[RMDB]
Conditions: 150 mM KOAc, 10 mM MgCl2 and 150 mM bicine (pH 8.5), 24 C. An RNA of 177 nucleotides, treated with 2A3 and read out base by base. It was measured as part of the RMDB library RFM100. For 2A3, 210 sequencing reads were counted.
RNA sequence: GGGAACGACUCGAGUAGAGUCGAAAACCACAUUGAAUAUUGGAACAUUUAAUUGCGCUAAAUCGUUUCAUUAAAAAAAUAACCUUUUCAAACUUAUUAAAUUAAGGCAAAUUUUAAAAAAUGGUAAGUUUACUGCCUCAUUCGUGAGGCAGUAAACAAAAGAAACAACAACAACAAC
Reactivity to 2A3 in 0.01 (KOAc 150mM, MgCl2 10mM, bicine 150mM(pH8.5), 24C), signal-to-noise 1, nucleotides 027 to 126: c000c000a000c000a080u090u150g080a060a000u030a050u130u030g000g000a000a000c000a000u000u000u000a190a300u230u300g120c130g180c130u080a070a090a090u000c100g000u000u000u000c000a000u030u200a020a230a160a000a120a000a000u130a000a000c000c040u000u000u210u300c100a070a000a160c080u130u220a300u230u150a250a050a260u230u000a030a030g000g030c000a000a000a300u230u200u000u200a130a300a000a000a000a000u080g050g050u050a000a130